[RMDB]
RNA sequence: GGGAACGACUCGAGUAGAGUCGAAAAUGAACGUGCGUACAUCUCUCUCAGACUGUACGACAGUCUGACUCUCACGCACUCUAGUUCCACGAGAGAGAGAGAGCGUUGGAACUAGGGUGAAAUGAAAUGACUAACCUGUAUUCGUACAGGUUAGUCAAAAAGAAACAACAACAACAAC
Reactivity to DMS in 0.01 (KOAc 150mM, MgCl2 10mM, bicine 150mM(pH8.5), 24C), signal-to-noise 3, nucleotides 027 to 126: u010g020a150a100c120g000u010g020c030g010u000a080c080a110u000c010u000c040u000c030u010c000a060g000a040c040u000g020u000a110c260g010a150c040a030g020u000c010u000g000a050c100u000c010u000c010a130c120g000c000a080c000u000c000u000a000g000u000u000c000c000a050c100g000a050g010a070g000a080g010a070g020a040g000a030g000c090g010u010u000g000g010a010a000c000u000a010g010g000g010u000g000a050a030a080u010g000a070a130a110
Reactivity to 2A3 in 0.01 (KOAc 150mM, MgCl2 10mM, bicine 150mM(pH8.5), 24C), signal-to-noise 4, nucleotides 027 to 126: u150g010a070a020c030g020u040g030c010g010u060a030c030a150u010c010u000c000u000c000u000c020a010g010a060c030u030g020u180a140c180g100a040c090a010g010u000c000u000g010a040c000u000c010u010c040a020c010g020c010a020c000u000c000u000a000g000u010u000c010c010a020c030g030a050g000a010g000a000g000a000g010a010g000a010g040c060g060u080u070g010g000a000a000c000u000a000g000g000g020u030g050a060a080a080u170g040a060a070a100
This 177-nucleotide RNA was probed chemically with DMS and 2A3. It was measured as part of the RMDB library M2PK90.